The record gives the reactivity of an RNA of 177 nucleotides to DMS and 2A3.
The RNA was probed in 150 mM KOAc, 10 mM MgCl2 and 150 mM bicine (pH 8.5) at 24 C.
Source: RMDB library M2PK90, as collected in RNAgym.
For 2A3, 1,057 sequencing reads were counted.
[RMDB]
RNA sequence: GGGAACGACUCGAGUAGAGUCGAAAAUAACGGACUAGGAAACUCGAUCUUUUAAGAGGUAAUCCUAGCGAAUCCACGGCGAGGAAACUAGGACACUAACCAUGUGAUCCCGGACGCUAGAAGAAAACCUUUAUCCGUGAUUCGUCACGGAUAAAGGAAAAGAAACAACAACAACAAC
Reactivity to DMS in 0.01 (KOAc 150mM, MgCl2 10mM, bicine 150mM(pH8.5), 24C), signal-to-noise 2, nucleotides 027 to 126: u010a090a120c100g050g000a150c050u010a010g020g010a000a160a120c010u000c000g010a110u010c140u000u000u030u000a050a110g000a020g000g010u010a130a070u000c000c000u000a010g000c070g010a130a080u000c000c040a150c090g000g010c010g020a100g010g000a100a080a050c010u000a100g010g010a040c010a000c010u000a040a170c240c230a130u020g000u000g000a070u000c000c000c010g000g020a100c040g010c040u000a040g020a130a090g000a050a070a130a100
Reactivity to 2A3 in 0.01 (KOAc 150mM, MgCl2 10mM, bicine 150mM(pH8.5), 24C), signal-to-noise 2, nucleotides 027 to 126: u160a020a040c030g040g050a040c000u010a030g010g030a090a120a060c010u010c040g060a140u110c110u090u300u050u070a210a030g010a010g000g050u040a020a070u060c010c010u000a000g000c010g020a000a070u020c020c000a000c040g040g050c040g000a050g060g120a120a000a170c030u020a060g010g000a010c020a020c020u010a050a000c030c010a040u180g010u000g030a300u040c010c020c000g020g050a010c020g010c050u060a000g080a160a010g050a000a150a040a050